[RMDB]
RNA sequence: GGGAACGACUCGAGUAGAGUCGAAAAAACAGCUUUUCGGCCUCUUCCAGCGUGCGGCGGCGUUCGGCCAGCACCUCGGUGAGGCGGUCAAGGGCUUGCUCGGCUUUUUUCAGCCGGAGGGGAGCCGUAUCCACGAGUCAUUCGUGACUCGUGGAUAAAAAGAAACAACAACAACAAC
Reactivity to DMS in 0.01 (KOAc 150mM, MgCl2 10mM, bicine 150mM(pH8.5), 24C), signal-to-noise 1, nucleotides 027 to 126: a070a020c080a060g030c020u010u010u000u010c010g010g030c000c000u010c000u000u030c000c010a010g000c260g030u000g000c000g010g000c160g010g030c090g000u010u040c150g010g010c000c010a200g000c000a030c000c000u010c260g000g000u010g000a000g020g010c020g000g020u000c100a020a070g000g000g030c000u000u000g000c040u020c020g000g030c000u000u000u010u000u030u020c220a050g000c000c010g000g020a000g040g020g010g000a020g000c010c060g010
Reactivity to 2A3 in 0.01 (KOAc 150mM, MgCl2 10mM, bicine 150mM(pH8.5), 24C), signal-to-noise 3, nucleotides 027 to 126: a000a010c090a020g100c040u050u070u080u120c050g120g000c020c000u050c000u280u050c010c000a030g020c020g120u000g000c000g080g000c060g020g010c040g200u270u220c070g230g050c030c000a000g020c000a010c000c000u010c000g000g040u040g010a000g000g010c000g010g000u060c020a000a030g070g000g010c000u000u090g080c040u050c020g060g000c080u180u080u020u060u230u300c050a010g000c020c030g040g040a030g040g060g020g000a000g000c000c000g020
An RNA of 177 nucleotides, treated with DMS and 2A3 and read out base by base. For DMS the reverse transcriptase was MarathonRT. Values cover nucleotides 27 to 126.